[RMDB]
RNA sequence: GGGAACGACUCGAGUAGAGUCGAAAAGCGCGUGGCCCUAAGCAAUGAAGAUGACACUUGAGAGAGGUUCCACUCUGCAGAGACAUCUUCACCGUCAGGUGGCGCGCUGGAUUACGAUCGCUGGGGGAACUGCUAUAGUGUUCGCACUAUAGCAGUUAAAAGAAACAACAACAACAAC
Reactivity to DMS in 0.01 (KOAc 150mM, MgCl2 10mM, bicine 150mM(pH8.5), 24C), signal-to-noise 9, nucleotides 027 to 126: g010c010g020c010g040u000g010g010c020c010c050u010a140a180g000c100a120a130u000g000a020a000g000a000u000g000a190c250a060c010u000u010g010a190g000a010g000a040g000g000u020u050c200c150a220c000u000c000u000g000c040a210g000a050g000a110c010a010u000c000u000u000c010a030c110c080g000u010c210a140g000g020u000g000g010c000g000c010g010c000u000g000g000a300u010u010a090c160g000a100u010c050g000c020u010g000g000g000g000g000
Reactivity to 2A3 in 0.01 (KOAc 150mM, MgCl2 10mM, bicine 150mM(pH8.5), 24C), signal-to-noise 9, nucleotides 027 to 126: g010c010g000c010g020u050g170g050c010c000c020u060a090a020g020c050a040a090u040g000a000a000g000a000u010g030a040c020a030c160u020u030g010a030g000a000g000a010g130g040u250u150c060c000a130c020u000c000u030g020c030a010g010a010g050a120c000a000u000c000u000u000c000a010c010c010g100u120c020a010g010g030u060g080g000c000g000c000g000c000u000g000g010a030u090u150a070c090g060a070u070c040g000c100u040g000g000g010g000g020

An RNA of 177 nucleotides, treated with DMS and 2A3 and read out base by base. 2A3 is a SHAPE reagent: it acylates the 2'-hydroxyl of flexible nucleotides of all four kinds. For DMS the reverse transcriptase was MarathonRT. Conditions: 150 mM KOAc, 10 mM MgCl2 and 150 mM bicine (pH 8.5), 24 C.